Structure probing data (2A3 and DMS) for a 177-nucleotide construct. Source: RMDB library OK1LIB, as collected in RNAgym. DMS adducts were read by reverse transcription with MarathonRT. The RNA was probed in 150 mM KOAc, 10 mM MgCl2 and 150 mM bicine (pH 8.5) at 24 C. Reactivities are rounded to 0.1 and cut off at 0 and 3. For 2A3, 1,875 sequencing reads were counted. Values cover nucleotides 27 to 126.
RNA sequence: GGGAACGACUCGAGUAGAGUCGAAAAGCAACGCGUGAUAGAGAUACUGAUGCUGGAACUGUUGGAUCGGUUCUUCCUAGACUGGCUAGGAAAAAUUUUAGUAAUAAGAUGGUUUUGCCUAUGGUUCGACUGAAUCCAUGUUCGCAUGGAUUCAGUCAAAAGAAACAACAACAACAAC
Reactivity to 2A3 in 0.01 (KOAc 150mM, MgCl2 10mM, bicine 150mM(pH8.5), 24C), signal-to-noise 4, nucleotides 027 to 126: g020c010a040a050c060g010c020g050u040g040a090u090a050g100a010g000a010u060a130c020u070g110a100u080g030c030u000g010g040a040a040c000u040g050u120u080g040g050a130u110c010g000g000u010u010c020u040u010c000c000u030a050g010a100c050u100g050g120c000u010a010g000g000a030a000a000a000a020u160u150u130u110a060g040u030a030a140u050a200a010g050a070u100g060g000u020u020u050u120g050c020c010u090a090u060g060g000u030u120c040
Reactivity to DMS in 0.01 (KOAc 150mM, MgCl2 10mM, bicine 150mM(pH8.5), 24C), signal-to-noise 2, nucleotides 027 to 126: g000c070a030a080c170g020c130g010u000g020a140u040a080g020a110g010a080u010a050c020u000g000a090u060g010c040u020g040g000a010a040c050u010g000u010u000g010g010a090u010c050g040g000u000u000c050u030u000c030c000u000a100g010a300c100u030g020g020c020u020a030g000g000a030a040a000a140a000u000u000u030u010a060g020u070a030a060u000a080a030g000a060u010g000g020u000u010u000u000g000c040c020u030a070u040g010g010u030u010c130